Description: An RNA of 177 nucleotides, treated with DMS and read out base by base.
RNA sequence: GGGAACGACUCGAGUAGAGUCGAAAAGAUAUGGAAAGAUUUCGGCCCAUUAUUUCGCGAUAAGCUCCAUUCGGAAACGAAUGUGAGCUUUUGACGCGAUUCAUGGGCCGAAAUCUUUCCUAAGUCACAAAUAGAUGGUCUUCGGACCAUCUAUUUGAAAAGAAACAACAACAACAAC
Reactivity to DMS in 0.01 (KOAc 150mM, MgCl2 10mM, bicine 150mM(pH8.5), 24C), signal-to-noise 3, nucleotides 027 to 126: g010a060u010a300u000g010g010a010a020a030g000a030u000u000u000c000g010g020c000c000c000a030u000u000a070u010u000u000c010g030c000g000a190u000a020a010g000c000u010c010c000a010u000u000c000g020g000a190a110a280c010g020a030a000u000g010u010g000a000g010c000u000u000u000u000g010a220c040g020c010g000a000u000u000c250a020u010g000g000g000c000c000g010a000a010a010u000c000u000u000u000c000c000u000a020a060g010u000c030a250
The data come from the RNA Mapping Database (RMDB), library TTRINS. The RNA was probed in 150 mM KOAc, 10 mM MgCl2 and 150 mM bicine (pH 8.5) at 24 C.